[RMDB]
An RNA of 177 nucleotides, treated with 2A3 and read out base by base. It was measured as part of the RMDB library RFM100. 2A3 adducts were read by reverse transcription with SuperScript II with manganese. The RNA was probed in 150 mM KOAc, 10 mM MgCl2 and 150 mM bicine (pH 8.5) at 24 C.

RNA sequence: GGGAACGACUCGAGUAGAGUCGAAAAGGGAUGGCGAUAAUAUACGCUGAAUGGAAUCCAGCUAAGUACCCGAUUGCAUGACCAUUACCGCAAAGAAGAACACAACGCGCCCCUACAAUAACACUUCCCGAGGCUGUAACUUCGGUUACAGCCUCGGAAAAGAAACAACAACAACAAC
Reactivity to 2A3 in 0.01 (KOAc 150mM, MgCl2 10mM, bicine 150mM(pH8.5), 24C), signal-to-noise 1, nucleotides 027 to 126: g010g000g000a040u040g030g000c020g000a000u040a200a030u020a080u000a030c000g010c000u000g070a040a020u080g210g000a040a000u000c000c000a080g030c030u030a060a080g040u170a140c000c000c050g010a060u000u130g090c180a080u000g000a040c000c000a030u140u000a110c000c000g060c000a060a000a000g300a080a000g110a180a000c010a000c000a100a000c010g000c000g000c030c000c020c020u080a090c030a000a050u010a180a000c120a000c040u010u010c000